[RMDB]
RNA sequence: GGGAACGACUCGAGUAGAGUCGAAAAGCAUUAACUUGUCCUCGUAGGCGUCCGUCCUACGUCCGACAAGACGACCAAAACACCCCGUGUCUCGCUGUGCCUUCGGGUGCCGAGCACUCCCUCCCUCGAGUCUAGGCUUAUUCGUAAGCCUAGACUCAAAAGAAACAACAACAACAAC
Reactivity to DMS in 0.01 (KOAc 150mM, MgCl2 10mM, bicine 150mM(pH8.5), 24C), signal-to-noise 2, nucleotides 027 to 126: g040c060a220u070u050a090a160c000u000u000g020u010c000c160u000c000g080u000a000g000g010c090g050u010c170c170g000u010c010c060u000a020c010g010u020c130c300g030a000c020a000a000g000a120c100g000a150c060c030a070a070a120a060c130a170c040c000c000c150g070u000g020u020c000u000c000g010c140u020g080u020g020c000c040u000u050c230g000g040g050u000g010c000c040g000a000g000c050a040c000u000c000c000c000u000c000c000c000u050c120
Reactivity to 2A3 in 0.01 (KOAc 150mM, MgCl2 10mM, bicine 150mM(pH8.5), 24C), signal-to-noise 6, nucleotides 027 to 126: g050c050a110u140u120a090a110c000u010u010g000u010c000c000u000c000g000u000a010g000g020c050g130u160c150c090g080u190c000c080u010a000c000g000u020c020c010g000a000c000a010a000g030a080c040g070a060c010c030a050a040a050a030c090a110c000c020c010c030g020u000g030u040c020u000c020g050c100u090g020u020g040c000c000u050u040c100g080g000g000u010g000c000c000g020a010g000c000a010c020u030c000c000c000u000c020c000c000u030c070
This 177-nucleotide RNA was probed chemically with DMS and 2A3. 2A3 is a SHAPE reagent: it acylates the 2'-hydroxyl of flexible nucleotides of all four kinds. The data come from the RNA Mapping Database (RMDB), libraries RFM100 and RFMREP. Conditions: 150 mM KOAc, 10 mM MgCl2 and 150 mM bicine (pH 8.5), 24 C. For 2A3 the reverse transcriptase was SuperScript II with manganese.